[RMDB]
RNA sequence: GGGAACGACUCGAGUAGAGUCGAAAAGAUAUGGAGCUAUCGUUUGGGAGCAGUCUCUUCGGAAACGAAGAGGCUGCGAAGAACAAACGAGUAGCUCCUAAGUCAAACCAAACGUUCGCGUUUGGAAGCAUAAGUUCAUCUUCGGAUGAACUUAUGCAAAAGAAACAACAACAACAAC
Reactivity to DMS in 0.01 (KOAc 150mM, MgCl2 10mM, bicine 150mM(pH8.5), 24C), signal-to-noise 1, nucleotides 027 to 126: g000a050u000a300u000g000g010a030g010c000u000a020u000c000g010u000u000u000g000g000g000a140g000c000a010g030u000c000u000c000u000u000c000g000g010a100a180a140c000g010a010a000g000a000g000g020c020u000g000c030g030a020a130g000a200a180c000a000a000a000c000g000a020g000u010a000g030c000u000c000c000u010a000a090g020u010c070a140a190a270c020c000a000a000a040c010g040u000u020c290g030c040g010u000u000u010g000g000a150a200